[RMDB]
RNA sequence: GGGAACGACUCGAGUAGAGUCGAAAAAAAUGGCAGACACGGACGAUAUUAUCGACUAUGAAUCCGAUGAUCUCACCGAAUACGAGGAUGAUGAAGAAGAUGGAGAGUCACUAGAAACUAGUGAUAUAGAUCCCAAAUCUUCUUAUAAGAUUGUAGAGAAUCAACUUAUCUUCGGAUAAGUUGAUUCAAAAGAAACAACAACAACAAC
Reactivity to DMS in 0.01 (KOAc 150mM, MgCl2 10mM, bicine 150mM(pH8.5), 24C), signal-to-noise 2, nucleotides 027 to 156: a070a080a080u010g010g010c010a050g000a100c070a070c020g010g000a090c010g010a280u000a030u010u000a200u000c090g030a140c210u010a090u010g020a110a130u010c010c010g010a100u000g020a060u000c040u000c040a080c030c060g000a080a110u010a100c040g030a090g020g040a160u010g020a160u000g000a040a040g010a030a090g010a040u000g030g000a060g000a300g020u000c000a020c030u010a050g010a150a080a100c070u000a020g020u000g010a010u000a070u000a160g010a260u020c020c000c020a050a140a050u000c010u010u000c010u000u000a140u000a050a060g020a130u010u000g010u010a100g010a290
Reactivity to 2A3 in 0.01 (KOAc 150mM, MgCl2 10mM, bicine 150mM(pH8.5), 24C), signal-to-noise 2, nucleotides 027 to 156: a010a000a020u100g020g010c020a000g000a030c020a000c030g020g040a030c050g020a020u030a050u190u120a030u060c030g020a030c080u130a070u240g090a100a040u070c000c020g040a050u040g030a050u040c000u020c020a060c030c010g010a050a060u120a120c090g040a020g030g020a040u070g020a060u100g030a070a000g000a000a020g000a000u020g010g000a040g010a010g050u000c000a020c050u010a000g070a140a180a040c080u000a000g010u020g020a000u010a000u010a010g090a070u040c010c010c000a010a130a100u000c010u030u040c000u020u070a050u020a030a050g050a140u050u080g050u100a030g030a000